[RMDB]
RNA sequence: GGGAACGACUCGAGUAGAGUCGAAAAGGUACCACCGACCAGACUCAGGGACAACAGGAGUAUCGAGGAAUACUUCAUAGAGAGUUUCUCUCUGUGGGGAUGACGGCUGCGAUGCUGGGGUUGGCCCACAAUUGCGACAUUUCGAUGUCGCAAUUGUAAAAGAAACAACAACAACAAC
Reactivity to 2A3 in 0.01 (KOAc 150mM, MgCl2 10mM, bicine 150mM(pH8.5), 24C), signal-to-noise 2, nucleotides 027 to 126: g070g020u130a070c030c020a010c040c000g030a020c000c020a020g050a130c020u030c120a040g010g010g020a000c020a040a000c000a030g020g100a020g060u010a020u010c010g030a040g010g100a090a060u100a290c000u010u000c000a010u020a010g020a010g000a010g050u090u190u120c040u000c000u000c000u000g000u010g000g030g000g000a000u070g030a030c070g020g100c000u130g030c030g010a010u030g010c000u010g000g100g000g000u000u000g020g010c000c000c000
Reactivity to DMS in 0.01 (KOAc 150mM, MgCl2 10mM, bicine 150mM(pH8.5), 24C), signal-to-noise 2, nucleotides 027 to 126: g000g000u050a060c060c050a110c060c000g010a090c050c050a100g000a140c060u010c120a150g000g010g010a040c050a050a030c020a010g000g000a070g020u000a010u000c030g010a130g010g000a050a110u040a050c000u010u010c000a040u000a030g020a070g000a000g040u010u030u110c010u000c000u000c000u000g050u010g000g000g000g000a100u020g010a190c190g010g010c030u000g030c030g020a040u000g000c020u020g000g030g000g000u010u000g010g000c030c000c010
Annotation
Structure probing data (2A3 and DMS) for a 177-nucleotide construct. For DMS, 3,957 sequencing reads were counted. For 2A3, 3,347 sequencing reads were counted. The reactions ran in a buffer of 150 mM KOAc, 10 mM MgCl2 and 150 mM bicine (pH 8.5), at 24 C. Values cover nucleotides 27 to 126.